The record gives the reactivity of an RNA of 207 nucleotides to 2A3 and DMS. The 2A3 profile rests on 1,441 reads.
RNA sequence: GGGAACGACUCGAGUAGAGUCGAAAAACUGACGGUACGCCGUCAGAACGGUAGAAAAGAUGGUUUGAAAACCACGCGUUCUACCAAUAUAGUAAAUAAAUAGGCGGAGCGGUCAUACGUGACCGCAAAAACAUCCUUGGCUUCGGCCAAGGAUGAACUAAGGAUAUUUCUUCGGAAAUAUCCUUAGAAAAGAAACAACAACAACAAC
Reactivity to 2A3 in 0.01 (KOAc 150mM, MgCl2 10mM, bicine 150mM(pH8.5), 24C), signal-to-noise 2, nucleotides 027 to 156: a000c010u020g000a000c000g000g010u040a020c150g030c030c000g010u000c000a000g010a050a000c020g020g020u010a010g000a000a010a020a030g050a250u020g010g080u050u060u210g130a180a140a000a000c000c000a020c040g040c030g080u030u010c000u000a000c000c000a020a010u040a000u000a000g040u040a000a020a100u060a040a050a040u090a090g100g040c060g050g030a040g020c010g020g010u010c000a040u030a070c200g060u030g010a030c000c000g000c010a010a000a000a000a000c000a000u000c000c000u000u020g010g000c000u010u050c180g040g010c000c010a000a010g000g000a000u000g000a000a000
Reactivity to DMS in 0.01 (KOAc 150mM, MgCl2 10mM, bicine 150mM(pH8.5), 24C), signal-to-noise 1, nucleotides 027 to 156: a110c000u040g000a060c020g010g000u000a050c300g000c000c000g010u000c000a000g010a020a070c050g000g010u000a000g010a010a010a090a180g000a080u000g000g020u000u010u000g010a190a150a220a070c000c000a000c000g040c130g020u000u000c000u000a000c010c000a110a100u010a090u000a150g000u000a030a070a110u010a100a070a140u030a090g000g010c030g000g010a240g000c000g000g040u000c030a090u000a070c230g030u020g000a120c010c000g000c020a010a000a010a100a050c000a030u000c000c010u020u000g010g000c000u000u000c300g040g010c060c020a000a010g000g000a000u000g000a010a010
Source: RMDB library M2RFOK, as collected in RNAgym.